[RMDB]
RNA sequence: GGGAACGACUCGAGUAGAGUCGAAAACAUGGCAGCAAGCUGCUUCCGCUCGGAUGAUGGUUUUGCUGUAUUAAUACCAGGGGUGAAGGAGGUGGCUAUUGGGACAAGAUUCUUCACGUUAUCCGAACGUAGUGCGUCGAUUCGUCGACGCACUACGAAAAGAAACAACAACAACAAC
Reactivity to 2A3 in 0.01 (KOAc 150mM, MgCl2 10mM, bicine 150mM(pH8.5), 24C), signal-to-noise 2, nucleotides 027 to 126: c020a040u100g160g000c020a020g000c000a010a010g000c000u020g000c000u000u040c000c000g100c230u150c180g020g000a050u020g010a060u040g050g020u090u170u160u030g000c050u000g020u050a050u000u240a090a060u060a110c010c010a000g030g020g020g000u070g030a020a030g040g030a020g020g050u060g010g040c020u070a130u200u200g050g010g020a020c010a020a030g040a180u080u000c010u090u040c040a030c070g060u030u090a060u020c010c020g060a030a000
Reactivity to DMS in 0.01 (KOAc 150mM, MgCl2 10mM, bicine 150mM(pH8.5), 24C), signal-to-noise 1, nucleotides 027 to 126: c200a050u000g060g060c000a000g020c020a010a020g000c010u000g030c010u000u000c010c000g030c290u030c300g000g010a000u000g020a140u000g000g000u000u000u000u000g030c010u040g000u000a060u000u010a110a090u010a090c080c040a080g000g000g000g060u000g000a050a070g000g000a080g000g020u000g000g000c060u000a130u010u000g070g000g010a090c090a070a080g000a100u000u000c000u000u000c010a060c050g020u000u000a140u000c020c030g010a060a130